RNA sequence: GGGAACGACUCGAGUAGAGUCGAAAAUAUACAUCAGAAGUCGGCACAACUCCCGACUCGCGGUGAGCGAUGCAGCGUAGCGCGAGCUACGCAGCUGCUGUGCGGAGGGCUAGCAAAAGCUAGCCUACCGUACCACUGGUUUCGACCAGUGGUACGGAAAAGAAACAACAACAACAAC
Reactivity to DMS in 0.01 (KOAc 150mM, MgCl2 10mM, bicine 150mM(pH8.5), 24C), signal-to-noise 4, nucleotides 027 to 126: u020a140u040a150c080a040u000c030a020g000a190a040g010u000c020g000g000c230a140c090a150a140c300u030c110c010c000g010a050c010u000c010g000c300g000g000u010g000a100g010c020g000a060u010g000c020a050g000c000g060u000a000g000c010g000c250g000a100g020c000u000a000c000g030c010a010g030c010u020g000c030u000g000u030g030c070g000g030a300g000g000g000c000u000a010g010c000a180a080a140a160g000c000u000a010g000c000c000u000a010
Reactivity to 2A3 in 0.01 (KOAc 150mM, MgCl2 10mM, bicine 150mM(pH8.5), 24C), signal-to-noise 4, nucleotides 027 to 126: u180a000u050a030c030a060u050c020a040g080a160a000g110u020c020g020g080c180a050c050a300a300c090u060c000c000c000g000a000c010u000c000g020c030g040g000u090g020a020g000c020g080a130u120g000c020a000g000c000g000u010a000g020c000g020c090g030a020g000c000u000a000c000g000c000a010g000c010u050g000c010u030g040u100g050c070g020g090a110g010g000g000c000u000a010g000c030a110a190a110a070g020c020u000a010g000c000c010u000a040
About this RNA:
The record gives the reactivity of an RNA of 177 nucleotides to DMS and 2A3. Values cover nucleotides 27 to 126. Conditions: 150 mM KOAc, 10 mM MgCl2 and 150 mM bicine (pH 8.5), 24 C. For DMS, 5,237 sequencing reads were counted.